RNA sequence: GGGAACGACUCGAGUAGAGUCGAAAACUGAUUAUAGCAUUGGCUGCUUGGUGUUCACUUUAUUUGCAUCUGUGAGUUUCCAACAAGCCCUAAGUUUACUGACAUGGCUGGUCCUCUACCCCAAGAAUGUUCUCCCAGAGGAAGGAUGAUGAUGAUACCGGUCAUUAUUAUUCGUAAUAAUGACCGGAAAAGAAACAACAACAACAAC
Reactivity to DMS in 0.01 (KOAc 150mM, MgCl2 10mM, bicine 150mM(pH8.5), 24C), signal-to-noise 1, nucleotides 027 to 156: c040u020g010a100u000u010a140u000a080g020c040a060u010u000g020g040c030u000g000c080u000u000g000g010u000g000u000u010c050a050c020u030u000u000a070u000u010u010g020c100a100u010c010u000g000u000g010a090g020u000u010u000c010c050a000a090c050a110a140g010c020c000c050u000a050a100g000u000u000u000a120c060u000g020a090c070a060u010g020g010c050u000g010g020u000c030c020u010c020u000a100c040c010c000c030a070a130g020a090a090u000g010u000u000c030u000c020c010c040a240g010a100g010g000a080a050g000g000a070u000g020a100u010g020a080u010g000a180u010a120
Reactivity to 2A3 in 0.01 (KOAc 150mM, MgCl2 10mM, bicine 150mM(pH8.5), 24C), signal-to-noise 2, nucleotides 027 to 156: c040u050g030a080u100u130a080u180a110g090c050a020u010u110g050g030c010u010g040c020u020u000g000g000u020g060u070u040c020a020c060u100u180u190a200u030u190u240g000c050a070u100c080u060g000u030g020a040g000u000u090u080c000c010a000a000c020a090a070g010c000c000c020u040a070a020g000u040u020u050a080c020u060g070a020c010a080u010g010g030c010u000g040g020u000c000c020u000c010u030a090c000c010c000c010a000a100g070a140a050u060g010u080u020c000u020c000c020c000a060g010a030g030g030a030a020g050g010a000u140g010a050u090g010a000u150g060a030u250a060
Chemical mapping of a 207-nucleotide RNA with DMS and 2A3. Conditions: 150 mM KOAc, 10 mM MgCl2 and 150 mM bicine (pH 8.5), 24 C. The data come from the RNA Mapping Database (RMDB), library OK3TST. For 2A3, 773 sequencing reads were counted. 2A3 adducts were read by reverse transcription with SuperScript II with manganese.